[RMDB]
RNA sequence: GGGAACGACUCGAGUAGAGUCGAAAAAUUGAACGAUUUAAUGGAUUUGUUCAACAAUAUAUCGGAUAUAGAUGUGGACGAGCAAAUUGGGGAAAUUACUAGAAAUGAAGAUAUUUAUAAAGAUGACCUAUCAAGCAUUAUUCGUAAUGCUUGAUAGAAAAGAAACAACAACAACAAC
Reactivity to DMS in 0.01 (KOAc 150mM, MgCl2 10mM, bicine 150mM(pH8.5), 24C), signal-to-noise 4, nucleotides 027 to 126: a160u000u010g010a040a060c030g010a040u000u010u000a190a120u020g040g000a030u000u000u010g010u000u000c010a020a040c140a070a100u010a080u000a080u000c050g000g000a250u020a070u000a060g020a050u010g000u000g010g010a250c060g000a050g000c050a030a030a060u000u010g030g010g000g000a110a060a050u010u000a050c040u000a090g000a070a080a060u000g000a090a140g000a110u000a020u000u010u000a080u010a150a100a150g000a100u010g010a090c150
Reactivity to 2A3 in 0.01 (KOAc 150mM, MgCl2 10mM, bicine 150mM(pH8.5), 24C), signal-to-noise 2, nucleotides 027 to 126: a000u030u010g000a050a000c030g040a040u020u080u270a080a050u180g130g000a020u040u000u140g000u030u000c010a010a020c030a100a000u070a000u030a040u180c030g010g030a010u030a040u050a300g060a080u070g030u050g040g010a010c000g020a020g040c010a000a040a110u030u020g020g000g010g000a000a100a000u100u070a080c040u050a070g070a150a110a060u150g010a080a040g030a070u100a060u250u250u060a250u130a210a040a110g100a080u070g020a020c010
The record gives the reactivity of an RNA of 177 nucleotides to DMS and 2A3.